[RMDB]
RNA sequence: GGGAACGACUCGAGUAGAGUCGAAAAGAUAUGGAGGUACCGGAGCUUUUGACGGCUGAAUGUCGGAAACGACAUACAGCCGAUAAGCUCGUACCUCCUAAGUCAAAACGGAGCGUUCGCGCUCCGACUAUCCCACUAUGUUCGCAUAGUGGGAUAGAAAAGAAACAACAACAACAAC
Reactivity to 2A3 in 0.01 (KOAc 150mM, MgCl2 10mM, bicine 150mM(pH8.5), 24C), signal-to-noise 7, nucleotides 027 to 126: g010a010u020a010u110g010g010a020g010g030u060a030c160c300g300g030a010g010c060u130u250u300u300g300a260c050g000g000c000u000g020a110a010u000g000u000c000g010g000a040a020a020c000g010a010c000a000u040a020c010a010g000c000c010g000a010u010a010a000g000c000u010c000g000u000a000c000c000u010c000c000u000a000a000g000u000c010a010a000a050a090c010g000g000a000g000c010g020u100u140c240g020c010g030c220u000c010c000g000a000
Reactivity to DMS in 0.01 (KOAc 150mM, MgCl2 10mM, bicine 150mM(pH8.5), 24C), signal-to-noise 6, nucleotides 027 to 126: g000a020u010a260u010g000g000a020g010g010u000a000c110c300g050g010a020g010c000u000u000u010u000g020a290c100g000g000c000u000g000a050a010u000g010u000c000g010g010a060a030a090c000g000a020c000a000u000a050c010a010g010c010c010g010a020u010a000a020g010c000u000c000g000u000a000c000c000u000c000c000u000a000a070g000u000c010a110a070a120a160c040g000g010a020g020c000g030u000u020c240g020c010g020c000u000c000c000g010a070